[RMDB]
RNA sequence: GGGAACGACUCGAGUAGAGUCGAAAACCGAAGCGAGGAGGAAAGCAAAGAAAGCAACGGGGCUAGCGAGUGGAUGUUCCGCCCCCCGAGGGGGCCGAGUGAGGCUUAUCCCGGGGAUCGGCGUCGCAAAGAUGAUUGUUCGCAAUCAUCAAAAGAAACAACAACAACAAC
Reactivity to DMS in 0.01 (KOAc 150mM, MgCl2 10mM, bicine 150mM(pH8.5), 24C), signal-to-noise 9, nucleotides 027 to 129: c050c000g000a130a050g030c050g000a020g020g010a040g010g010a040a040a050g020c190a070a060a070g020a050a060a050g020c090a060a060c070g010g010g000g000c080u030a090g020c010g000a040g020u050g020g020a070u000g000u010u010c010c000g030c040c040c010c000c010c040g000a110g020g010g010g010g010c020c000g000a090g030u030g030a150g000g000c040u030u000a090u070c010c010c040g000g050g000g000a060u000c100g010g010c000g000u020c060g030c090a040a080a100
Reactivity to 2A3 in 0.01 (KOAc 150mM, MgCl2 10mM, bicine 150mM(pH8.5), 24C), signal-to-noise 9, nucleotides 027 to 129: c000c000g010a040a000g050c030g010a020g010g010a020g010g020a080a020a000g040c070a060a050a050g070a050a090a010g020c020a020a060c050g010g000g030g020c040u060a020g030c000g030a020g020u100g030g050a080u070g040u090u020c020c010g000c020c000c000c000c010c010g010a220g000g000g000g000g000c000c000g030a070g070u270g050a070g000g010c000u030u070a080u150c000c000c010g000g010g000g000a040u090c090g000g000c010g020u030c030g010c060a080a050a030